[RMDB]
RNA sequence: GGGAACGACUCGAGUAGAGUCGAAAAGAUAUGGACGUACUCCCCACCCGUGUACGUCGAAGAACUAUGUGUAAAUCGGAAACGAUUUACACAUAGGGAGACGGUAGCGGAGGUACGUCCUAAGUCAGACGUAGUUCUUGUUCGCAAGAACUACGUCAAAAGAAACAACAACAACAAC
Reactivity to DMS in 0.01 (KOAc 150mM, MgCl2 10mM, bicine 150mM(pH8.5), 24C), signal-to-noise 1, nucleotides 027 to 126: g010a160u000a140u000g000g000a000c000g000u030a030c020u000c200c000c020c060a300c200c000c000g000u000g000u030a190c000g050u010c020g040a050a200g000a170a190c000u010a000u000g000u000g000u000a000a040a000u000c000g000g010a140a100a200c010g050a030u000u000u000a010c010a010c010a000u000a000g000g000g020a240g000a000c000g000g000u000a300g000c000g000g010a050g020g000u020a000c000g000u000c000c000u000a000a120g000u000c190a160
Reactivity to 2A3 in 0.01 (KOAc 150mM, MgCl2 10mM, bicine 150mM(pH8.5), 24C), signal-to-noise 1, nucleotides 027 to 126: g160a100u300a200u300g000g000a000c020g010u010a000c030u280c060c020c000c010a020c010c000c000g030u110g200u300a020c000g000u000c030g040a160a040g020a040a030c000u010a000u030g000u000g000u020a000a000a030u000c020g010g040a060a110a070c000g000a000u000u000u000a000c020a000c000a000u000a000g000g000g000a040g000a000c040g010g000u140a010g000c030g030g060a020g010g000u000a010c020g020u050c000c000u000a040a010g150u110c210a070
Chemical mapping of a 177-nucleotide RNA with DMS and 2A3. Values are in units of 0.01, from 0 to 300, in steps of 10. The DMS profile rests on 746 reads. Conditions: 150 mM KOAc, 10 mM MgCl2 and 150 mM bicine (pH 8.5), 24 C. The 2A3 profile rests on 2,288 reads. Values cover nucleotides 27 to 126.